RNA sequence: GGGAACGACUCGAGUAGAGUCGAAAAACAUGAGUGACCUUACACUCAUGUGCGUACUGUUACUGCAAACAGUGCGAAGUCUAGUGUAAGGUCACUGGACUGUCUAGUGUUUGCAGUAACACUGGAAGCACUGCUAUCUAUUCGUAGAUAGCAGUGCAAAAGAAACAACAACAACAAC
Reactivity to 2A3 in 0.01 (KOAc 150mM, MgCl2 10mM, bicine 150mM(pH8.5), 24C), signal-to-noise 5, nucleotides 027 to 126: a000c020a030u090g030a010g000u020g050a140c000c060u100u150a030c020a010c000u020c040a050u050g000u000g010c030g050u050a040c010u010g000u010u000a010c010u020g030c020a010a020a000c020a060g190u030g040c070g030a060a020g030u010c050u070a020g000u010g040u040a200a160g110g040u060c000a000c000u000g000g010a010c010u040g150u110c020u030a050g040u020g000u010u000u030g010c000a010g000u010a000a000c000a000c010u020g030g030a080a030
Reactivity to DMS in 0.01 (KOAc 150mM, MgCl2 10mM, bicine 150mM(pH8.5), 24C), signal-to-noise 5, nucleotides 027 to 126: a050c050a070u000g000a020g010u000g000a110c110c090u000u010a100c010a000c000u010c190a040u010g030u000g020c100g010u000a050c060u000g000u010u000a020c020u000g000c030a030a010a010c000a010g010u000g020c060g000a040a060g010u000c020u010a020g020u000g010u000a080a060g000g000u010c000a000c000u010g010g000a090c070u000g000u000c010u000a070g020u000g000u000u000u000g010c010a020g000u000a030a000c010a030c060u000g000g000a120a140
Annotation: The record gives the reactivity of an RNA of 177 nucleotides to 2A3 and DMS. For DMS the reverse transcriptase was MarathonRT. The reactions ran in a buffer of 150 mM KOAc, 10 mM MgCl2 and 150 mM bicine (pH 8.5), at 24 C. 2A3 adducts were read by reverse transcription with SuperScript II with manganese. The data come from the RNA Mapping Database (RMDB), library OK2TRN. The 2A3 profile rests on 9,001 reads. The DMS profile rests on 8,201 reads.